[RMDB]
RNA sequence: GGGAACGACUCGAGUAGAGUCGAAAAGGGUAUGUAUGUGUGUGAAUAUAAGGAGAAUUCCCAGCAUUCAGGGGAUCAGGAAUGUUCAGGGUGAAAAAUGAGAUUGCAUGAGAGUGAUGUGAGGUGAGAGGUAAUUAGAAGGGUGCAGAUAUAAGGGCCGCGAAUAAAAUUUCGAUUUUAUUCGCGGAAAAGAAACAACAACAACAAC
Reactivity to 2A3 in 0.01 (KOAc 150mM, MgCl2 10mM, bicine 150mM(pH8.5), 24C), signal-to-noise 1, nucleotides 027 to 156: g000g010g000u010a010u090g050u010a050u010g010u010g000u000g000u010g040a130a050u150a030u050a190a050g120g050a060g020a060a060u070u050c000c010c010a020g010c010a010u040u060c050a030g030g000g000g030a010u000c020a010g030g000a000a040u000g010u080u070c050a030g010g020g000u090g070a140a020a000a000a020u070g010a000g000a030u020u150g070c010a030u070g010a030g000a000g010u020g040a070u060g010u020g010a010g030g060u010g000a030g000a000g020g010u020a030a060u050u050a050g010a030a030g030g000g000u010g010c000a000g010a030u200a030u190a140a090g080g020g040